[RMDB]
RNA sequence: GGGAACGACUCGAGUAGAGUCGAAAAGCUGCAGGAUAUGGCCAUUCUCACCGGUGGUCAGGUGAUCAGCGAAGAGGUCGGCCUGACGCUGGAGAACGCCGACCUGUCGCUGCUAGGCAAGGCCCGCCGGACCCCAAACAUUCGUGUUUGGGGUCCGAAAAGAAACAACAACAACAAC
Reactivity to 2A3 in 0.01 (KOAc 150mM, MgCl2 10mM, bicine 150mM(pH8.5), 24C), signal-to-noise 1, nucleotides 027 to 126: g020c040u070g000c030a030g050g120a110u090a090u250g000g010c000c000a070u160u000c000u050c030a110c060c000g000g000u100g030g070u010c020a030g060g050u080g040a030u090c020a040g030c030g000a040a000g090a000g160g000u020c020g030g030c010c000u040g060a030c060g080c150u180g090g000a040g000a030a000c000g000c000c000g000a000c000c000u000g000u010c000g000c000u000g010c010u050a050g100g000c040a060a070g090g040c000c040c000g000c000
Reactivity to DMS in 0.01 (KOAc 150mM, MgCl2 10mM, bicine 150mM(pH8.5), 24C), signal-to-noise 2, nucleotides 027 to 126: g050c060u010g000c030a080g040g000a090u150a020u010g020g000c000c010a180u000u020c020u000c030a100c070c000g000g020u000g000g020u030c030a110g010g000u000g030a100u030c030a020g000c020g020a020a010g000a030g010g000u000c000g000g010c070c040u000g000a190c150g010c150u000g010g000a150g010a110a110c300g000c020c000g020a060c020c000u000g040u000c030g000c010u000g000c140u000a090g000g000c090a020a080g000g000c030c020c010g000c110
An RNA of 177 nucleotides, treated with 2A3 and DMS and read out base by base. Source: RMDB library OK1LIB, as collected in RNAgym.